The record gives the reactivity of an RNA of 207 nucleotides to 2A3.
The 2A3 profile rests on 752 reads.
For 2A3 the reverse transcriptase was SuperScript II with manganese.
RNA sequence: GGGAACGACUCGAGUAGAGUCGAAAAGCUGGUCGGUGACGACCAGCAACGAUCAGAGUGCUGAUCGAAACGUGCACUUAAAGACCACCAAGGCACGAACAAGCGACGCAGGUGGUCAAAGCCAGAGAGGGCAUAACAAAAAUAAAAAGGCGUCGCAGACGACAUCUUCGUUCGCGAAGAUGUCGUCAAAAGAAACAACAACAACAAC
Reactivity to 2A3 in 0.01 (KOAc 150mM, MgCl2 10mM, bicine 150mM(pH8.5), 24C), signal-to-noise 1, nucleotides 027 to 156: g000c010u000g000g000u030c000g000g050u070g000a040c000g000a000c010c000a000g010c010a000a000c010g000a000u000c000a010g050a070g210u230g130c020u020g000a000u020c000g010a030a010a000c040g000u010g000c010a050c270u000u050a070a000a040g000a000c000c000a000c000c000a040a010g090g000c020a010c020g010a060a040c060a110a040g000c000g010a000c000g000c000a040g000g000u010g000g000u010c010a000a000a000g000c000c030a050g060a040g030a090g270g000g000c000a000u100a150a000c050a020a070a050a050a020u190a040a020a030a020a000g040g000c000g000u000c000g000c010a000